[RMDB]
RNA sequence: GGGAACGACUCGAGUAGAGUCGAAAAAAAAUUUGUAAUAGCAGGCGCAAGUACUGAGGAAAUGAACUCGGCAUUGUUACAGCUAACCCAAGGGUUGAGUUCUGGCGUAUUAAGAGGUGAGGAACUGAAUGCUGUGUUUGAGUCAGCACCUAACAUCAUAGCAGAUGAUAUUCGUAUCAUCUGCUAUAAAAGAAACAACAACAACAAC
Reactivity to DMS in 0.01 (KOAc 150mM, MgCl2 10mM, bicine 150mM(pH8.5), 24C), signal-to-noise 3, nucleotides 027 to 156: a050a020a060a060u010u010u010g000u000a060a130u000a090g030c030a130g010g040c070g000c010a060a080g050u000a030c030u000g020a060g000g000a020a070a080u000g020a070a110c010u000c010g020g010c030a130u000u000g010u000u000a060c040a100g010c060u000a040a080c040c000c020a070a120g020g020g010u000u000g020a080g020u000u000c030u000g030g000c040g030u010a060u010u000a080a080g010a090g020g020u000g010a080g010g030a040a070c050u000g000a050a070u000g020c010u000g020u010g000u000u000u000g010a110g010u000c010a080g010c020a060c060c040u000a040a070c060a110u000c030
Reactivity to 2A3 in 0.01 (KOAc 150mM, MgCl2 10mM, bicine 150mM(pH8.5), 24C), signal-to-noise 2, nucleotides 027 to 156: a000a000a010a030u220u140u080g010u090a130a110u060a060g020c040a010g070g000c010g000c100a020a020g020u070a060c070u080g000a030g020g050a150a110a110u140g060a010a020c040u010c010g000g040c030a040u000u070g010u070u100a070c080a050g010c040u030a060a060c030c000c030a030a090g150g010g010u010u060g040a040g000u020u030c020u040g030g000c010g000u040a040u100u080a150a020g030a010g040g010u030g000a010g000g030a050a020c000u000g100a090a040u090g030c030u040g010u010g050u100u060u060g040a020g040u040c000a010g030c000a030c000c000u000a010a050c030a060u170c010